RNA sequence: GGGAACGACUCGAGUAGAGUCGAAAAUAGCUAUCCAUUAUUUAUUGACUAACUGUUAAAACCUAAAGAACCUGUGCUCCUCCACAUUUAGUAUCCUAACUAUGGGUAUCUUAAUACUAUCAGAGCAUAAGGCAAUCUGAUUCGUCAGAUUGCCUUAAAAAGAAACAACAACAACAAC
Reactivity to 2A3 in 0.01 (KOAc 150mM, MgCl2 10mM, bicine 150mM(pH8.5), 24C), signal-to-noise 2, nucleotides 027 to 126: u080a010g010c010u040a060u020c010c020a000u020u080a080u180u210u060a160u110u040g060a060c030u010a100a000c000u010g050u070u050a070a120a050a060c030c010u080a020a060a080g030a050a100c000c000u010g020u030g000c010u000c000c000u050c040c000a030c000a100u000u000u000a010g000u000a020u010c040c030u010a010a040c120u180a140u110g050g040g020u000a000u030c000u000u070a090a060u100a060c050u030a050u260c000a040g020a000g000c010a010
Reactivity to DMS in 0.01 (KOAc 150mM, MgCl2 10mM, bicine 150mM(pH8.5), 24C), signal-to-noise 2, nucleotides 027 to 126: u030a050g010c040u010a040u010c030c030a120u000u000a030u010u000u020a020u090u010g010a080c070u000a030a050c140u010g000u000u020a060a090a080a100c050c020u010a060a050a180g000a120a100c030c000u000g000u000g020c000u000c020c020u000c080c070a050c060a090u000u000u030a030g010u010a070u010c060c070u000a070a050c200u000a060u020g010g000g010u000a000u000c040u020u020a050a040u000a110c050u000a070u000c060a050g000a020g030c140a160
An RNA of 177 nucleotides, treated with 2A3 and DMS and read out base by base. 2A3 is a SHAPE reagent: it acylates the 2'-hydroxyl of flexible nucleotides of all four kinds. The 2A3 profile rests on 1,378 reads. Values cover nucleotides 27 to 126.